About this RNA
The data come from the RNA Mapping Database (RMDB), library OK3TST. This 207-nucleotide RNA was probed chemically with DMS and 2A3. For DMS the reverse transcriptase was MarathonRT. For DMS, 4,826 sequencing reads were counted. In probing experiments dimethyl sulfate is read out at A N1 and C N3, which are open when not base-paired. For 2A3 the reverse transcriptase was SuperScript II with manganese. The RNA was probed in 150 mM KOAc, 10 mM MgCl2 and 150 mM bicine (pH 8.5) at 24 C.

RNA sequence: GGGAACGACUCGAGUAGAGUCGAAAACGCCCUCGAGCUUGGCCAGGUACAUCUCUUCGUACUUCAGCGCCGACUGCAGGCCGAGCGCGCGCAGGGUGGCGUACUCGGUAAGCUCGAAGUAUCGGAGCGAGACCUCCACGAAGGCGCGGUUGGCGCGCUUGGAUAUGUAGUUCGCUACAUAUCCAAGAAAAGAAACAACAACAACAAC
Reactivity to DMS in 0.01 (KOAc 150mM, MgCl2 10mM, bicine 150mM(pH8.5), 24C), signal-to-noise 2, nucleotides 027 to 156: c020g000c300c020c000u020c020g020a000g000c000u000u000g030g020c000c030a080g030g030u000a040c010a140u000c070u020c080u010u000c070g020u010a060c060u000u000c040a130g000c060g040c000c040g010a050c020u030g020c020a210g060g030c000c000g010a050g030c000g020c010g030c070g030c070a100g010g060g000u010g010g000c030g020u000a040c000u010c000g000g000u000a060a120g020c010u010c040g040a070a120g010u000a060u000c060g020g010a090g010c030g000a180g020a160c090c020u000c020c010a080c120g000a120a050g020g020c030g020c030g020g030u000u000g020g020c030g020c030g000
Reactivity to 2A3 in 0.01 (KOAc 150mM, MgCl2 10mM, bicine 150mM(pH8.5), 24C), signal-to-noise 3, nucleotides 027 to 156: c050g040c000c010c000u020c020g080a050g010c050u080u110g040g050c040c050a030g030g000u050a050c020a180u050c050u020c020u210u120c060g020u020a050c010u070u090c060a040g000c020g020c040c020g020a040c030u060g050c070a100g130g000c010c000g020a030g000c020g000c000g000c010g000c060a050g040g060g050u060g020g000c020g000u020a030c010u010c010g020g000u050a070a030g020c010u020c060g020a050a010g020u030a060u180c100g020g020a010g010c030g030a040g060a130c010c000u000c000c020a070c090g070a140a030g040g000c010g000c020g100g090u060u080g040g010c010g000c010g000